[RMDB]
RNA sequence: GGGAACGACUCGAGUAGAGUCGAAAAGAUAUGGAUCUGAGGUGAUAAUAAAUUUCGGAAACGAGGAUUUGUAUUAACCUAGAUCCUAAGUCAAACAUGAGAGCAUGGUUCGCCAUGCUCUCAUGAAUCGCCUAACUAUGUUCGCAUAGUUAGGCGAAAAAGAAACAACAACAACAAC
Reactivity to DMS in 0.01 (KOAc 150mM, MgCl2 10mM, bicine 150mM(pH8.5), 24C), signal-to-noise 2, nucleotides 027 to 126: g000a020u000a300u020g000g000a000u000c000u010g000a010g010g020u020g000a070u000a050a050u010a000a010a000u000u000u000c010g000g000a110a080a250c010g000a030g000g020a010u000u000u000g020u010a000u000u010a100a020c000c000u010a010g010a030u000c020c020u020a000a100g010u000c010a130a070a280c010a000u030g010a020g000a010g010c000a010u000g000g010u000u000c250g000c000c000a000u000g000c000u000c000u000c000a000u000g000a090a050
Reactivity to 2A3 in 0.01 (KOAc 150mM, MgCl2 10mM, bicine 150mM(pH8.5), 24C), signal-to-noise 1, nucleotides 027 to 126: g000a010u120a040u080g010g030a000u050c020u080g270a020g030g010u050g110a100u080a300a020u080a010a090a060u030u060u060c010g030g000a070a040a060c010g010a030g090g000a020u020u020u060g050u010a090u050u100a050a010c000c000u010a010g000a000u010c000c000u020a080a040g020u020c040a040a020a180c020a010u000g030a000g000a000g010c010a010u000g010g070u070u260c300g020c040c010a010u000g040c000u010c000u000c000a010u000g000a000a000